Description
An RNA of 177 nucleotides, treated with 2A3 and DMS and read out base by base. The DMS profile rests on 19,995 reads. Values cover nucleotides 27 to 126. In probing experiments dimethyl sulfate is read out at A N1 and C N3, which are open when not base-paired.
[RMDB]
RNA sequence: GGGAACGACUCGAGUAGAGUCGAAAAGAUAUGGAUCCACAACAGCAACAGCUAGGGUUCGGAAACGAACCGCUAGACAUGCUGUGUGGAUCCUAAGUCAAAACGACAGCACUUCGGUGCUGUCGAACAACCUAAAGUACUUCGGUACUUUAGGUUGAAAAGAAACAACAACAACAAC
Reactivity to 2A3 in 0.01 (KOAc 150mM, MgCl2 10mM, bicine 150mM(pH8.5), 24C), signal-to-noise 7, nucleotides 027 to 126: g000a000u010a010u040g000g000a000u000c000c010a000c010a260a250c010a080g020c030a050a180c040a300g010c010u000a000g010g000g000u010u000c010g000g010a000a000a000c000g000a000a000c000c070g020c030u000a000g020a010c030a270u300g000c000u000g000u000g000u000g000g000a000u010c000c000u000a000a000g000u000c000a000a040a080a100c020g010a000c000a000g000c000a000c020u110u150c300g120g000u010g010c000u000g000u000c000g000a010a000
Reactivity to DMS in 0.01 (KOAc 150mM, MgCl2 10mM, bicine 150mM(pH8.5), 24C), signal-to-noise 7, nucleotides 027 to 126: g000a010u000a020u010g010g000a010u000c000c000a010c000a050a050c010a010g020c000a140a090c250a120g010c000u000a000g010g000g010u000u000c000g010g000a010a000a020c000g020a010a000c000c000g010c000u000a000g000a020c040a300u010g020c010u000g010u000g010u000g010g010a000u000c000c000u000a000a050g000u000c000a110a080a130a220c030g010a010c000a000g010c000a010c000u000u010c230g030g020u000g010c000u000g010u000c000g010a050a120